RNA sequence: GGGAACGACUCGAGUAGAGUCGAAAAGAUUACGUGACGUUGUGGAAUCGAUACUACGCACGAGAUUCCAAGGUCUCUGUAGUACGUCCGCUGGUGACGUCUUUGGAGUCACGUUCGAUAUACGAAAGGUAUCUACUUGGUUCGCCAAGUAGAUACCAAAAGAAACAACAACAACAAC
Reactivity to DMS in 0.01 (KOAc 150mM, MgCl2 10mM, bicine 150mM(pH8.5), 24C), signal-to-noise 3, nucleotides 027 to 126: g010a110u030u010a030c080g030u010g020a000c050g010u010u000g000u020g000g000a090a080u020c010g020a150u000a010c080u000a040c040g000c110a110c060g000a060g000a030u000u010c100c060a070a080g020g020u000c020u000c030u040g030u010a040g010u000a010c030g000u000c010c010g000c120u050g020g010u040g040a010c050g000u000c010u020u000u010g000g000a080g020u000c040a020c030g010u000u000c020g010a140u010a070u000a040c060g000a050a160a070
Reactivity to 2A3 in 0.01 (KOAc 150mM, MgCl2 10mM, bicine 150mM(pH8.5), 24C), signal-to-noise 3, nucleotides 027 to 126: g080a080u120u090a020c040g000u010g010a000c050g020u010u010g020u020g020g010a020a060u040c020g000a010u000a050c070u010a030c040g040c060a030c080g000a000g000a020u080u000c090c000a010a040g080g000u010c020u000c010u060g060u030a010g030u040a010c010g000u000c020c010g060c070u120g060g150u150g060a010c030g000u010c000u040u010u070g010g020a020g000u020c020a020c090g000u040u050c010g020a000u020a010u020a160c050g090a090a000a030